[RMDB]
RNA sequence: GGGAACGACUCGAGUAGAGUCGAAAACUGUGGUGAGACCCUAUCUAGUAUAGCAAUCCACCAAGCAGGUGACUUCACACAAUUCAGGUUCUCAGAGAAAAUGCGCCCUGACUUGACAGGUAUGGUCCAGUACCACUGAGUUCGCUCAGUGGUACUGAAAAGAAACAACAACAACAAC
Reactivity to DMS in 0.01 (KOAc 150mM, MgCl2 10mM, bicine 150mM(pH8.5), 24C), signal-to-noise 5, nucleotides 027 to 126: c020u010g030u000g010g010u010g010a070g020a080c270c300c000u010a030u020c000u010a070g010u030a050u000a040g000c150a100a120u020c050c060a060c030c050a010a130g010c090a060g000g020u000g010a040c030u000u000c040a040c090a170c170a050a080u010u000c010a020g000g000u000u010c020u010c010a060g000a130g020a060a040a070a060u000g020c060g060c300c000c010u010g000a080c120u000u020g010a080c080a070g000g000u010a050u030g010g000u000c050
Reactivity to 2A3 in 0.01 (KOAc 150mM, MgCl2 10mM, bicine 150mM(pH8.5), 24C), signal-to-noise 4, nucleotides 027 to 126: c020u030g030u080g040g020u020g030a110g010a040c040c020c000u000a020u000c050u040a070g080u170a070u010a030g000c010a030a020u010c000c000a010c000c010a090a020g060c040a010g020g070u060g030a040c010u050u030c070a050c010a000c000a060a160u070u060c010a010g040g000u130u030c040u000c020a020g050a000g090a130a090a030a040u120g010c010g030c010c000c000u040g040a070c020u050u050g050a040c030a050g090g050u080a100u120g050g000u010c020

Source information:
Structure probing data (DMS and 2A3) for a 177-nucleotide construct. For DMS, 5,270 sequencing reads were counted. DMS adducts were read by reverse transcription with MarathonRT. For 2A3 the reverse transcriptase was SuperScript II with manganese. The data come from the RNA Mapping Database (RMDB), library OK1LIB.